RNA sequence: GGGAACGACUCGAGUAGAGUCGAAAAAUUGUCAAGUAGAGCCAUGUGACAUUAAAUUCGCACAGAGUAGGUAUCGAUAUGUCAAUCAAACAAUCCAUGGUUAUCAGUUAGAUCGUCAGCCAUGGUCGGAGUAGAUCAGCUGCAUCGGUUCCACAAGAAUCUCCUUAUACUUCGGUAUAAGGAGAUUAAAAGAAACAACAACAACAAC
Reactivity to 2A3 in 0.01 (KOAc 150mM, MgCl2 10mM, bicine 150mM(pH8.5), 24C), signal-to-noise 3, nucleotides 027 to 156: a000u130u080g030u040c040a030a030g030u010a010g080a030g050c030c020a070u050g050u040g060a060c020a020u070u060a090a170a120u140u130c060g010c050a020c020a010g070a080g070u090a080g080g020u110a080u180c020g000a030u030a060u100g050u020c020a020a050u050c060a060a060a090c040a060a030u020c010c010a030u020g020g000u060u100a030u110c030a030g030u080u050a030g020a150u090c060g060u050c040a000g020c020c020a040u040g000g020u030c050g000g000a050g030u080a020g030a040u060c030a010g040c010u040g020c020a030u020c010g000g060u050u070c010c020a030c000a060a020g090
Reactivity to DMS in 0.01 (KOAc 150mM, MgCl2 10mM, bicine 150mM(pH8.5), 24C), signal-to-noise 3, nucleotides 027 to 156: a100u000u000g030u000c030a080a190g030u000a070g000a050g010c030c060a050u010g000u010g030a070c020a080u000u010a080a090a210u000u000c080g030c070a160c070a090g000a140g020u010a070g010g030u000a060u010c060g020a170u000a060u000g040u000c060a080a060u000c050a060a050a080c100a130a060u000c020c000a020u000g000g020u000u000a080u030c060a070g020u000u010a130g020a060u010c040g000u010c040a060g000c010c030a030u000g020g010u020c040g000g010a160g030u010a100g010a040u010c040a100g030c010u000g000c020a070u000c090g010g000u010u000c010c010a050c070a040a140g000